The record gives the reactivity of an RNA of 207 nucleotides to DMS. The DMS profile rests on 1,814 reads. The reactions ran in a buffer of 150 mM KOAc, 10 mM MgCl2 and 150 mM bicine (pH 8.5), at 24 C. For DMS the reverse transcriptase was MarathonRT. It was measured as part of the RMDB library OK3TST.
[RMDB]
RNA sequence: GGGAACGACUCGAGUAGAGUCGAAAAGAGUGUGAGACGGAUGUGUUCGUCGAUGCACUGUCUUACGAGAAAGACAAAUACCGCUGCCAAUUCUGUGAGGAGAACUUUCGGGUAACUCGCAUCUGACUGUUGUCCCCCAACACUUAUUACAAAUGGGUGCCAGUUCUAUAUUCGUAUAGAACUGGCAAAAAGAAACAACAACAACAAC
Reactivity to DMS in 0.01 (KOAc 150mM, MgCl2 10mM, bicine 150mM(pH8.5), 24C), signal-to-noise 1, nucleotides 027 to 156: g010a050g000u010g000u000g000a200g020a020c000g050g030a090u000g010u020g000u000u000c020g050u000c010g000a200u010g010c030a110c000u010g020u000c010u000u000a080c090g030a300g000a100a080a070g020a090c060a050a050a180u010a050c020c020g000c080u010g000c030c050a080a090u010u010c030u010g000u010g010a120g000g000a090g010a070a070c020u010u000u000c060g010g010g020u000a070a070c090u030c150g020c120a100u010c030u010g030a030c030u020g040u010u000g000u000c020c020c000c010c000a040a060c150a060c050u000u000a080u000u000a240c120a080a070a060u000g000g010g000